[RMDB]
RNA sequence: GGGAACGACUCGAGUAGAGUCGAAAAAUCAACGGGUUAGCCAUAUGGAUAAUGAUUCUAAUAAAGGAAGGGUUAAAGCUGCUCCUUAUUAUGAUUAUAAUACACUUCUUCCAUGUAUUGAAAGCAAGUGCUCUACGGGAUUCGUCCCGUAGAGCACAAAAGAAACAACAACAACAAC
Reactivity to 2A3 in 0.01 (KOAc 150mM, MgCl2 10mM, bicine 150mM(pH8.5), 24C), signal-to-noise 1, nucleotides 027 to 126: a000u210c040a130a000c000g000g200g000u170u090a000g050c000c000a060u070a090u070g000g000a040u090a010a010u090g000a040u070u070c000u150a000a000u000a040a160a050g020g100a020a000g240g000g000u000u300a170a000a000g000c000u220g000c000u000c000c060u000u000a000u000u000a020u150g000a000u030u030a000u300a150a200u090a000c040a000c000u090u170c000u000u000c040c000a000u000g030u170a180u150u040g250a000a000a070g000c000a100a060
This 177-nucleotide RNA was probed chemically with 2A3. It was measured as part of the RMDB library OK1LIB.